Structure probing data (2A3 and DMS) for a 207-nucleotide construct. The DMS profile rests on 1,916 reads. For 2A3, 1,332 sequencing reads were counted. The data come from the RNA Mapping Database (RMDB), library OK3TST. As a SHAPE reagent, 2A3 marks flexible, mostly unpaired nucleotides at the ribose 2'-OH.
RNA sequence: GGGAACGACUCGAGUAGAGUCGAAAAAACAUUGUCAAAGCUCACGGGAAAGUAGUUUUGAAAAUGGAUCGCGCUUCUGGAUUCCAUCAGUUAACGAUUACCCGCGUAAAAACUGGUUACGCUGUUGGCGAACAUCCAGGCGGUAGAAUCCGCCGAAGCCCUAUAGCUUAUUCGUAAGCUAUAGGGCAAAAGAAACAACAACAACAAC
Reactivity to 2A3 in 0.01 (KOAc 150mM, MgCl2 10mM, bicine 150mM(pH8.5), 24C), signal-to-noise 3, nucleotides 027 to 156: a000a000c040a020u050u100g040u010c000a000a010a010g010c020u120c070a050c100g140g040g050a120a100a090g040u030a000g000u030u000u010u030g050a050a050a030a010u020g010g010a060u080c080g020c020g000c220u140u140c040u060g070g010a060u130u110c040c010a020u040c020a030g010u060u070a100a030c030g000a020u030u100a020c000c010c080g000c020g020u030a000a060a050a070a050c020u070g090g010u020u030a020c010g000c020u040g040u110u030g030g000c070g120a060a010c030a030u160c040c020a020g010g000c010g000g000u010a050g090a150a050u050c010c000g010c000c000g040a010a010
Reactivity to DMS in 0.01 (KOAc 150mM, MgCl2 10mM, bicine 150mM(pH8.5), 24C), signal-to-noise 1, nucleotides 027 to 156: a070a030c000a000u000u020g000u000c000a050a010a070g020c010u000c110a190c220g000g020g010a150a080a150g010u020a060g000u000u000u000u030g000a010a050a050a020u000g020g000a070u000c000g040c030g020c090u000u000c060u010g040g010a210u000u020c090c020a110u000c030a040g010u000u000a080a040c030g000a050u000u000a120c000c020c040g060c020g040u010a060a060a080a080a050c020u030g020g010u000u000a100c140g000c030u000g010u000u000g020g000c120g010a070a080c070a080u010c070c000a180g000g020c020g010g000u000a090g000a060a120u000c010c000g030c000c000g000a070a180